[RMDB]
Structure probing data (2A3) for a 177-nucleotide construct. Source: RMDB library OK1LIB, as collected in RNAgym. The 2A3 profile rests on 587 reads. Conditions: 150 mM KOAc, 10 mM MgCl2 and 150 mM bicine (pH 8.5), 24 C.
RNA sequence: GGGAACGACUCGAGUAGAGUCGAAAAGUACGAAGCGGGUCUUCGGUGUUUGAAACGCAUUCUUACUGCUAACUCUUAUAUGCGUCUCUAGGGCUGGAAAUGACUGUUUCUGCAUUCUCCAAAGAAACGAGUAUCCGCGUUUCGACGCGGAUACUCGAAAAGAAACAACAACAACAAC
Reactivity to 2A3 in 0.01 (KOAc 150mM, MgCl2 10mM, bicine 150mM(pH8.5), 24C), signal-to-noise 2, nucleotides 027 to 126: g030u020a020c050g030a000a010g020c120g080g040g160u050c000u130u030c000g010g000u100g300u000u020u060g070a050a050a040c000g000c030a070u030u130c110u100u080a060c070u130g030c060u120a120a000c000u040c020u160u050a080u010a010u280g020c030g000u000c010u030c020u010a060g020g020g000c000u020g020g000a060a080a040u280g010a030c030u060g000u020u000u000c000u010g000c000a020u000u060c100u060c020c060a180a210a020g050a000a050a000